[RMDB]
RNA sequence: GGGAACGACUCGAGUAGAGUCGAAAAAGUGCUGGGAUUACAGGUGUGAGCCACUGCGCCCGGCCUGAGCCACUGCACCUGGCCUGUUUUUUCUAACUGUGUUGAAUAAUUUGGGAUUCCUCUCUACGGAAUUAACGUAUUUCGAUACGUUAAUUCCAAAAGAAACAACAACAACAAC
Reactivity to 2A3 in 0.01 (KOAc 150mM, MgCl2 10mM, bicine 150mM(pH8.5), 24C), signal-to-noise 2, nucleotides 027 to 126: a000g130u100g010c010u020g000g090g040a120u120u130a110c000a040g000g010u020g040u010g120a020g020c000c020a210c200u110g010c050g030c080c000c010g000g000c000c000u020g000a000g000c010c000a150c090u060g030c040a030c000c010u020g050g070c020c010u020g020u000u070u020u000u040u040c030u050a040a060c040u110g030u020g070u290u040g070a080a070u100a100a080u070u100u100g050g020g010a030u040u030c020c000u030c020u000c020u090a050c100
Reactivity to DMS in 0.01 (KOAc 150mM, MgCl2 10mM, bicine 150mM(pH8.5), 24C), signal-to-noise 5, nucleotides 027 to 126: a030g000u000g010c010u010g010g000g000a060u010u010a080c020a030g010g010u000g020u010g010a070g010c030c020a090c110u000g010c150g010c010c020c020g010g000c010c010u000g010a120g000c020c020a070c080u000g000c050a030c030c030u000g000g000c030c030u010g010u000u000u000u000u010u000c030u010a060a080c090u000g010u000g000u000u000g000a080a060u010a040a080u000u000u000g010g000g010a140u000u000c010c010u010c150u000c050u010a110c300
Structure probing data (2A3 and DMS) for a 177-nucleotide construct. The DMS profile rests on 8,661 reads. For 2A3, 2,070 sequencing reads were counted. It was measured as part of the RMDB library OK2TST.